[RMDB]
This 207-nucleotide RNA was probed chemically with 2A3 and DMS. The data come from the RNA Mapping Database (RMDB), library M2RFPK. The 2A3 profile rests on 6,633 reads.
RNA sequence: GGGAACGACUCGAGUAGAGUCGAAAAAUCUUUAAGCAGAUGGCAGGUUCACCCCGUACGGAGCGGAAGUUCGCGCUUCCGUGAAACGCGAAAAUCGGACGGUGGCUGCAAGUCGCAUCGCAAAACCUAUAGCUUGUUAGGUUCGCCUAACAAGCAACAAUGUCAUGUACUUCGGUACAUGACAUUGAAAAGAAACAACAACAACAAC
Reactivity to 2A3 in 0.01 (KOAc 150mM, MgCl2 10mM, bicine 150mM(pH8.5), 24C), signal-to-noise 5, nucleotides 027 to 156: a000u070c040u040u130u090a120a030g020c080a050g010a070u060g070g000c010a010g040g040u190u150c020a010c000c000c000c010g000u010a030c030g010g050a030g010c000g000g010a010a010g020u110u220c100g000c040g010c100u010u000c010c000g000u020g030a070a070a010c070g030c040g070a060a020a000a120u110c000g000g020a030c090g020g040u030g020g000c020u020g000c020a020a050g080u080c050g000c070a030u030c030g010c050a040a050a050a090c020c030u110a070u080a190g000c000u000u000g000u000u000a000g000g020u030u050c160g060c030c000u000a000a000c000a000a000g000c000a000a000
Reactivity to DMS in 0.01 (KOAc 150mM, MgCl2 10mM, bicine 150mM(pH8.5), 24C), signal-to-noise 2, nucleotides 027 to 156: a040u010c030u000u000u020a060a120g030c030a080g020a060u000g010g000c030a110g020g020u000u010c030a090c030c020c000c010g020u010a060c010g020g020a300g000c000g010g010a060a070g020u000u000c300g010c300g000c010u000u000c000c060g010u010g000a010a070a060c030g020c060g010a060a080a120a110u010c030g010g010a040c050g010g020u000g030g000c040u020g020c050a040a090g020u000c020g000c050a110u000c070g020c030a080a060a060a120c050c030u000a140u000a110g020c010u000u000g010u000u010a000g020g010u000u000c300g000c000c000u010a000a000c010a000a020g020c000a030a020